Chemical mapping of a 207-nucleotide RNA with 2A3. The RNA was probed in 150 mM KOAc, 10 mM MgCl2 and 150 mM bicine (pH 8.5) at 24 C. Reactivities are given for positions 27 through 156. The data come from the RNA Mapping Database (RMDB), library RSTRND. For 2A3, 572 sequencing reads were counted.

RNA sequence: GGGAACGACUCGAGUAGAGUCGAAAAUAGGCUAGCUAGCCAUCAACCACACGUUUCGCACGUGGACAGUGGAUUCUGAUGGUCAUAUUACAGUGUGCUAGCGAGGGAACUCCGUCCGGGGGUGAACCGCGAAACAGUACCGGACUCACCAAGUAGCGUUUGAUUGAGUCUUCGGACUCAAUCAAACAAAAGAAACAACAACAACAAC
Reactivity to 2A3 in 0.01 (KOAc 150mM, MgCl2 10mM, bicine 150mM(pH8.5), 24C), signal-to-noise 1, nucleotides 027 to 156: u090a000g000g010c000u040a020g010c010u030a010g010c010c000a000u020c000a020a120c000c000a060c000a030c090g040u020u060u180c190g080c110a070c050g090u140g060g150a050c060a040g020u060g050g040a070u270u040c050u120g010a010u000g030g050u110c100a010u110a080u260u150a070c040a080g110u070g000u000g170c000u000a030g010c010g020a070g020g000g010a030a000c020u000c000c000g030u000c010c020g000g020g000g030g000u010g010a060a010c010c000g000c030g100a000a050a000c070a040g070u070a060c010c000g000g010a030c000u000c070a080c030c030a040a030g030u030a020g030c030